[RMDB]
RNA sequence: GGGAACGACUCGAGUAGAGUCGAAAAGGGCUCAGGUCCCAGACGUGCCUGGAUGAUGUGGGGUCACCCACAUUGGGGGGAGUGUGAGGGAGCCACCGCCUGUGGGAUCUUGGCAGGAGGACAGCAGCACGAACUGGCUGUUCGCAGCCAGUUCGUGAAAAGAAACAACAACAACAAC
Reactivity to DMS in 0.01 (KOAc 150mM, MgCl2 10mM, bicine 150mM(pH8.5), 24C), signal-to-noise 1, nucleotides 027 to 126: g000g010g010c010u000c070a140g000g010u000c060c000c020a100g000a120c150g050u020g010c030c000u000g000g000a140u020g000a010u000g010u000g000g020g000g010u010c300a140c000c000c000a010c000a020u000u000g010g050g020g020g010g010a140g000u010g000u000g000a220g020g000g010a090g020c070c010a080c060c030g000c010c010u000g000u010g000g010g000a070u000c020u020u010g020g000c030a070g050g010a210g000g000a020c080a060g010c020a090g010
Annotation: The record gives the reactivity of an RNA of 177 nucleotides to DMS. For DMS, 978 sequencing reads were counted. Conditions: 150 mM KOAc, 10 mM MgCl2 and 150 mM bicine (pH 8.5), 24 C.